[RMDB]
RNA sequence: GGGAACGACUCGAGUAGAGUCGAAAAUACUAGCAUUCGGUUCCAACCCUGGAUGGAUACUCAAAGGUUGGCUGAGUUCCUUCCUCCGGCCUAGGUUCCGAUGCUCCAUCCAAGGCCGGAAACCAAAGUUCUAUUGGUUGUUCGCAACCAAUAGAACAAAAGAAACAACAACAACAAC
Reactivity to 2A3 in 0.01 (KOAc 150mM, MgCl2 10mM, bicine 150mM(pH8.5), 24C), signal-to-noise 1, nucleotides 027 to 126: u240a050c080u040a010g010c040a010u100u040c030g010g000u000u040c030c010a020a030c050c040c040u020g020g010a020u040g020g000a060u100a240c010u010c070a000a020a160g190g010u100u060g070g000c020u040g000a010g020u040u020c020c000u030u030c000c010u000c010c000g000g010c000c000u040a040g000g010u010u040c000c020g000a030u050g000c000u000c030c000a080u030c010c010a010a010g010g000c000c000g000g060a000a030a030c040c030a170a090a020
Reactivity to DMS in 0.01 (KOAc 150mM, MgCl2 10mM, bicine 150mM(pH8.5), 24C), signal-to-noise 1, nucleotides 027 to 126: u000a030c120u030a070g000c080a050u000u000c090g010g030u010u000c030c060a030a090c140c030c050u020g010g010a030u000g010g000a020u030a050c060u000c050a060a110a110g010g010u000u030g000g010c110u010g020a100g000u000u000c000c010u000u000c040c040u000c010c050g010g000c000c010u000a170g020g000u010u000c050c030g000a070u000g010c040u000c050c070a090u000c090c090a090a040g000g020c000c010g000g000a010a020a130c130c120a080a100a170
The record gives the reactivity of an RNA of 177 nucleotides to 2A3 and DMS. 2A3 adducts were read by reverse transcription with SuperScript II with manganese. DMS adducts were read by reverse transcription with MarathonRT. High DMS reactivity at an A or C suggests that its Watson-Crick edge is free. The data come from the RNA Mapping Database (RMDB), library M2PK90. The reactions ran in a buffer of 150 mM KOAc, 10 mM MgCl2 and 150 mM bicine (pH 8.5), at 24 C.